[RMDB]
RNA sequence: GGGAACGACUCGAGUAGAGUCGAAAAAGAAAUGCAAGCAAGAAUACCUGAAGAAUUAAUUAAAAUUGUUAAUCAUACUUUAGGUCAUCAAGAGUAUGAAGUUUUCCAAUAUAUGUGGUCAUGGAUACAUGCUCCUAUAUUUCGAUAUAGGAGCAUGAAAAGAAACAACAACAACAAC
Reactivity to 2A3 in 0.01 (KOAc 150mM, MgCl2 10mM, bicine 150mM(pH8.5), 24C), signal-to-noise 2, nucleotides 027 to 126: a060g020a030a030a010u020g000c030a020a100g000c040a040a060g000a160a050u090a100c020c010u050g000a030a040g010a050a050u110u150a060a030u080u150a070a180a030a120u090u110g020u040u080a030a020u040c000a020u050a140c000u060u030u050a000g040g020u060c010a030u080c010a070a050g010a020g140u010a060u070g050a030a040g010u050u060u030u020c020c030a060a040u100a030u010a020u170g050u030g030g030u100c040a080u030g050g170a000u290a160
Reactivity to DMS in 0.01 (KOAc 150mM, MgCl2 10mM, bicine 150mM(pH8.5), 24C), signal-to-noise 4, nucleotides 027 to 126: a050g010a080a090a040u000g020c050a070a160g010c090a070a130g010a160a100u000a050c020c010u000g010a030a040g010a150a070u010u000a020a050u000u000a060a070a100a150u010u010g000u000u000a050a030u000c020a060u010a110c010u000u000u000a070g010g010u000c160a050u000c040a040a100g000a070g000u000a020u000g010a050a070g020u010u000u000u000c010c020a060a110u010a070u000a080u000g020u010g010g010u000c050a050u000g000g000a070u010a140

Source: RMDB library OK2TRN, as collected in RNAgym. Chemical mapping of a 177-nucleotide RNA with 2A3 and DMS. The DMS profile rests on 3,758 reads. Values cover nucleotides 27 to 126. The 2A3 profile rests on 1,282 reads. For 2A3 the reverse transcriptase was SuperScript II with manganese. Conditions: 150 mM KOAc, 10 mM MgCl2 and 150 mM bicine (pH 8.5), 24 C.